[RMDB]
RNA sequence: GGGAACGACUCGAGUAGAGUCGAAAAUUCGAUAAAAGCCAUUGCUGAAUGAUAUGUUACAUUAUUAGAAUAAGAAAGUUCUUCGAUAAUGUCAAUAGGUAAUCUGAUUCCCAUUGAUUCAUAUUUAUCAAUUGCUUCCUCUUGCUCUACAGUUAAGCACCAUCUACGUAUUCGUACGUAGAUGGUGAAAAGAAACAACAACAACAAC
Reactivity to 2A3 in 0.01 (KOAc 150mM, MgCl2 10mM, bicine 150mM(pH8.5), 24C), signal-to-noise 5, nucleotides 027 to 156: u070u050c030g020a000u070a110a170a020a030g020c040c020a050u040u080g010c050u080g080a090a120u080g050a070u100a050u220g040u050u070a020c000a010u020u030a010u010u040a130g010a020a030u160a160a050g140a170a100a030g150u040u030c000u030u050c040g010a000u000a000a010u000g010u020c020a020a040u060a120g010g050u080a050a070u020c070u090g060a170u040u010c010c010c000a020u020u050g030a010u030u020c060a020u040a090u140u140u090a030u040c000a040a030u030u070g000c000u030u030c010c030u040c030u060u050g030c040u060c020u120a070c040a110g050u130u140a070a010g030
Reactivity to DMS in 0.01 (KOAc 150mM, MgCl2 10mM, bicine 150mM(pH8.5), 24C), signal-to-noise 2, nucleotides 027 to 156: u020u000c060g000a160u000a050a120a100a080g020c030c050a180u000u000g000c030u020g000a160a140u010g000a080u000a040u000g020u000u010a100c010a060u000u000a030u000u000a060g020a060a030u000a080a140g010a110a110a200g010u000u000c050u000u010c040g010a030u000a000a020u000g000u010c060a030a050u000a020g000g030u000a050a080u000c150u020g000a300u000u000c010c000c020a110u000u010g010a090u010u000c090a150u000a060u000u000u000a060u000c040a030a130u000u000g010c020u000u000c000c020u020c030u000u000g010c000u010c060u000a050c110a080g000u000u000a050a110g000